[RMDB]
The record gives the reactivity of an RNA of 177 nucleotides to DMS and 2A3. For 2A3, 2,450 sequencing reads were counted. For DMS the reverse transcriptase was MarathonRT. For DMS, 2,451 sequencing reads were counted.
RNA sequence: GGGAACGACUCGAGUAGAGUCGAAAAGAUAUGGACGGGACCCAGCUUUGAUCUAGUGAUCGGAAACGAUACCUAGGGAGCUGCUAACCGUCCUAAGUCAAAACAGCAAUUCUUCGGAAUUGCUGAACAUACACAAGCGGUUCGCCGCUUGUGUAUGAAAAGAAACAACAACAACAAC
Reactivity to DMS in 0.01 (KOAc 150mM, MgCl2 10mM, bicine 150mM(pH8.5), 24C), signal-to-noise 3, nucleotides 027 to 126: g000a060u000a300u010g000g010a020c000g000g010g020a100c300c290c030a010g010c000u000u000u020g000a060u000c000u000a030g020u000g010a020u010c000g000g000a060a040a120c000g020a020u000a040c070c000u000a020g030g010g010a000g020c020u000g000c030u010a110a300c010c000g000u000c000c010u000a010a060g000u000c030a080a070a140a230c000a000g000c000a000a010u000u000c000u000u030c220g020g000a010a010u000u000g020c000u000g000a030a070
Reactivity to 2A3 in 0.01 (KOAc 150mM, MgCl2 10mM, bicine 150mM(pH8.5), 24C), signal-to-noise 1, nucleotides 027 to 126: g020a010u050a070u080g020g000a010c010g010g050g000a030c010c030c000a000g020c010u300u270u090g070a110u080c010u020a020g040u020g240a010u000c020g030g030a070a070a020c000g000a010u100a240c020c010u000a000g020g000g000a010g000c000u000g040c030u050a060a050c010c020g000u000c000c000u000a000a010g010u010c030a000a000a020a090c000a010g030c010a000a000u000u010c010u050u090c300g110g010a010a020u010u000g000c000u010g000a020a010